Source information:
An RNA of 177 nucleotides, treated with DMS and 2A3 and read out base by base. Reactivities are given for positions 27 through 126. The RNA was probed in 150 mM KOAc, 10 mM MgCl2 and 150 mM bicine (pH 8.5) at 24 C. Source: RMDB library OK2TST, as collected in RNAgym. For DMS the reverse transcriptase was MarathonRT.
RNA sequence: GGGAACGACUCGAGUAGAGUCGAAAAAUGGGAAAAUUAGCAAACAGUUAUUAACACAAUUAGCCGGGCACCGAUCCAUAUGCUACUCACUGAUGGAUAUCAAUCCUAAGAUCAACAGUGUGUUAUGGUACAUCAAGCUAUUCGUAGCUUGAUGUACAAAAGAAACAACAACAACAAC
Reactivity to DMS in 0.01 (KOAc 150mM, MgCl2 10mM, bicine 150mM(pH8.5), 24C), signal-to-noise 4, nucleotides 027 to 126: a060u000g010g000g000a080a070a080a060u010u000a030g020c060a040a060a100c090a050g010u000u010a090u010u000a060a080c080a030c120a020a090u010u000a070g010c070c060g010g000g010c070a040c050c030g000a050u000c030c010a050u000a080u010g020c070u000a080c030u000c020a050c060u010g010a090u010g000g000a050u000a060u010c150a080a090u010c010c020u010a100a070g020a060u000c140a080a130c070a040g000u000g010u000g000u000u010a060u010g000
Reactivity to 2A3 in 0.01 (KOAc 150mM, MgCl2 10mM, bicine 150mM(pH8.5), 24C), signal-to-noise 4, nucleotides 027 to 126: a000u060g000g020g080a000a120a020a050u110u060a080g040c030a070a010a120c020a040g060u070u070a130u090u130a110a010c020a000c010a100a110u060u050a040g030c010c010g000g020g000c030a020c040c020g050a020u010c010c000a020u040a000u090g030c030u020a020c010u010c010a030c020u020g020a040u060g060g000a020u050a020u150c080a090a040u020c020c000u050a100a070g050a120u050c040a030a050c020a030g030u010g010u010g020u100u060a120u140g090